RNA sequence: GGGAACGACUCGAGUAGAGUCGAAAAAGAUACGUGUGCACAUGCGUACCUCAUGCUAGACGCAGAGACUCGUACUCAGACCAUGGGUACUGUCUAGUCGAUCGAUCACAUGAUAGCGUACGAUCUCCUACAUGGCCUCGUUCGCGAGGCCAUGUAGAAAAGAAACAACAACAACAAC
Reactivity to DMS in 0.01 (KOAc 150mM, MgCl2 10mM, bicine 150mM(pH8.5), 24C), signal-to-noise 2, nucleotides 027 to 126: a080g010a060u010a050c040g060u010g020u010g030c020a140c080a000u000g010c010g020u000a050c060c010u000c040a070u020g000c040u000a080g000a060c020g040c240a160g010a120g010a060c080u000c080g000u000a000c010u020c030a050g020a140c260c260a090u000g000g010g000u000a000c000u030g000u000c010u000a020g000u000c110g040a160u020c050g020a020u000c090a060c010a020u000g000a060u010a060g030c030g000u000a050c010g000a050u000c050u000c090
Reactivity to 2A3 in 0.01 (KOAc 150mM, MgCl2 10mM, bicine 150mM(pH8.5), 24C), signal-to-noise 2, nucleotides 027 to 126: a010g060a020u090a080c000g000u030g020u060g030c040a020c010a100u050g010c000g040u010a110c020c010u030c020a020u120g020c010u020a020g030a020c000g000c050a050g000a010g020a260c020u060c180g010u000a000c010u000c030a060g090a300c070c110a140u070g010g000g030u030a040c020u110g000u050c010u000a000g040u090c020g040a170u070c040g030a050u080c020a040c000a080u010g100a110u090a050g030c030g000u020a000c020g000a040u010c040u030c020
An RNA of 177 nucleotides, treated with DMS and 2A3 and read out base by base. The 2A3 profile rests on 2,154 reads. The DMS profile rests on 1,279 reads. The reactions ran in a buffer of 150 mM KOAc, 10 mM MgCl2 and 150 mM bicine (pH 8.5), at 24 C. 2A3 adducts were read by reverse transcription with SuperScript II with manganese.